[RMDB]
RNA sequence: GGGAACGACUCGAGUAGAGUCGAAAACACCGGAUUGCCAGCGUCGUCGUGACCGGCGAGUUGAACGGUCACCGCGUUGUAGCUCGGGAUGAUGAGCUCGGCACCGAACACCUCGGACAACCAGAGGGCAUGUGAGUGACUUCGGUCACUCACAUGCAAAAGAAACAACAACAACAAC
Reactivity to DMS in 0.01 (KOAc 150mM, MgCl2 10mM, bicine 150mM(pH8.5), 24C), signal-to-noise 2, nucleotides 027 to 126: c120a140c080c020g020g010a130u010u010g000c010c000a220g010c030g020u020c090g030u020c290g020u000g000a020c020c010g010g020c010g010a130g020u030u000g000a100a090c010g000g010u020c020a020c050c030g020c070g000u000u000g010u000a020g030c020u000c020g000g020g020a240u000g040a090u000g000a060g000c000u000c040g020g000c000a060c000c000g000a090a050c180a250c000c000u000c040g020g000a050c170a050a080c030c020a230g010a000g000g000
Reactivity to 2A3 in 0.01 (KOAc 150mM, MgCl2 10mM, bicine 150mM(pH8.5), 24C), signal-to-noise 2, nucleotides 027 to 126: c060a060c030c010g000g040a220u220u130g000c030c040a040g030c010g070u080c020g040u010c030g030u100g000a000c000c000g000g020c060g020a050g220u130u240g120a220a040c000g000g000u000c010a000c030c000g000c010g030u040u190g090u160a000g030c030u040c010g070g080g070a130u150g070a070u100g000a010g040c000u000c000g000g000c030a010c020c020g040a060a030c020a040c010c030u000c000g020g060a020c040a120a120c040c020a060g010a040g070g020
Source: RMDB library OK2TRN, as collected in RNAgym.
Structure probing data (DMS and 2A3) for a 177-nucleotide construct.
The 2A3 profile rests on 1,251 reads.
The reactions ran in a buffer of 150 mM KOAc, 10 mM MgCl2 and 150 mM bicine (pH 8.5), at 24 C.